Overview:
Chemical mapping of a 177-nucleotide RNA with DMS. It was measured as part of the RMDB library M2PK50. Reactivities are rounded to 0.1 and cut off at 0 and 3. In probing experiments dimethyl sulfate is read out at A N1 and C N3, which are open when not base-paired. Reactivities are given for positions 27 through 126.
[RMDB]
RNA sequence: GGGAACGACUCGAGUAGAGUCGAAAAGGGUUGUAGUUCGCUACAACCCAAAGAAAAGAGCAAGGACCAGGUCAAUAAAGGUCCAAAAAGUACGAAAGUACAAAAUCGUGAAGUUCGCUUCACGAAACAGAGUUAUCAGGUUCGCCUGAUAACUCUGAAAAGAAACAACAACAACAAC
Reactivity to DMS in 0.01 (KOAc 150mM, MgCl2 10mM, bicine 150mM(pH8.5), 24C), signal-to-noise 1, nucleotides 027 to 126: g000g010g030u000u000g050u000a020g020u000u050c150g050c010u000a010c010a000a010c000c000c000a020a030a060g000a110a090a160a100g010a100g000c140a070a110g070g000a010c000c000a160g020g020u020c120a110a090u000a060a100a180g010g010u040c000c000a010a010a080a090a060g000u000a000c020g000a070a030a110g030u000a000c000a110a030a110a060u000c000g000u000g000a000a010g020u000u000c190g050c030u000u010c000a000c010g000a020a070a160